[RMDB]
RNA sequence: GGGAACGACUCGAGUAGAGUCGAAAAGCGUAGCUGUCAGCUCUCCGUUACAGGCUUGAGAAGGGUUGACACUCUCUCAUGUAACAUUUAUAUUUCUAGGCUGGACCAGUCGUACUCAGUUUGAAGACACAGGGAUCUGUUUCGACAGAUCCCUGUGAAAAGAAACAACAACAACAAC
Reactivity to DMS in 0.01 (KOAc 150mM, MgCl2 10mM, bicine 150mM(pH8.5), 24C), signal-to-noise 2, nucleotides 027 to 126: g030c040g010u000a070g020c170u000g000u010c040a050g030c000u000c060u020c050c060g000u010u010a060c110a070g000g030c220u010u010g010a120g000a040a070g000g020g050u010u050g020a090c200a060c020u000c010u000c010u000c030a020u000g000u000a070a060c060a130u020u030u010a110u000a140u040u000u000c040u020a160g000g000c010u000g000g010a040c090c030a020g010u000c010g020u010a040c030u000c040a100g020u000u000u010g050a090a110g020a220
Reactivity to 2A3 in 0.01 (KOAc 150mM, MgCl2 10mM, bicine 150mM(pH8.5), 24C), signal-to-noise 1, nucleotides 027 to 126: g080c010g040u090a030g000c040u040g030u100c000a000g010c010u010c030u020c050c010g010u000u000a030c030a050g070g060c070u100u130g070a070g040a180a050g000g030g040u090u080g030a030c040a060c070u010c000u000c000u000c000a070u000g040u000a080a030c000a020u130u220u170a160u020a070u030u200u050c050u060a010g060g000c010u000g020g010a010c080c000a010g040u020c050g000u030a030c010u000c000a110g110u100u190u220g220a080a010g010a000
Source information:
An RNA of 177 nucleotides, treated with DMS and 2A3 and read out base by base. Values cover nucleotides 27 to 126. DMS adducts were read by reverse transcription with MarathonRT. The RNA was probed in 150 mM KOAc, 10 mM MgCl2 and 150 mM bicine (pH 8.5) at 24 C. It was measured as part of the RMDB library OK2TST.